[RMDB]
RNA sequence: GGGAACGACUCGAGUAGAGUCGAAAAGCUCGGUGACACCGCGUCUGCCUGGGUCCGAAAGAUUUCUUGUCGCAAAUCUACAAGACAUUGGUUAACGUGUGGGCCGCUUGAGCGGCCGCUCGGCGGGUGUUGGGUGGCGCUUCGGUGCUAUCCAACAAAAAGAAACAACAACAACAAC
Reactivity to DMS in 0.01 (KOAc 150mM, MgCl2 10mM, bicine 150mM(pH8.5), 24C), signal-to-noise 5, nucleotides 027 to 126: g010c020u010c030g000g010u010g010a100c130a120c050c020g010c030g000u010c050u010g010c010c010u000g020g000g020u010c010c020g010a100a120a060g000a030u000u000u010c020u020u030g010u020c140g010c160a050a040a050u010c030u000a040c220a110a070g000a010c050a080u010u000g010g010u010u010a090a110c040g000u010g010u010g010g010g010c010c010g010c020u020u020g010a090g020c000g010g010c040c030g000c020u010c030g000g000c030g010g000g020
Reactivity to 2A3 in 0.01 (KOAc 150mM, MgCl2 10mM, bicine 150mM(pH8.5), 24C), signal-to-noise 5, nucleotides 027 to 126: g010c000u000c020g030g020u040g030a010c010a020c030c010g010c000g010u000c040u030g010c000c010u020g030g000g010u000c010c000g030a070a030a000g020a000u010u020u000c020u030u120g090u060c040g020c070a010a010a050u030c010u020a020c020a040a000g010a000c010a020u020u070g030g000u040u080a050a010c010g010u010g010u080g040g040g000c000c000g000c000u130u220g030a020g010c000g000g000c000c000g000c010u010c000g040g000c000g000g020g010

Chemical mapping of a 177-nucleotide RNA with DMS and 2A3.
For DMS, 16,535 sequencing reads were counted.
2A3 adducts were read by reverse transcription with SuperScript II with manganese.
Values cover nucleotides 27 to 126.
It was measured as part of the RMDB library OK1LIB.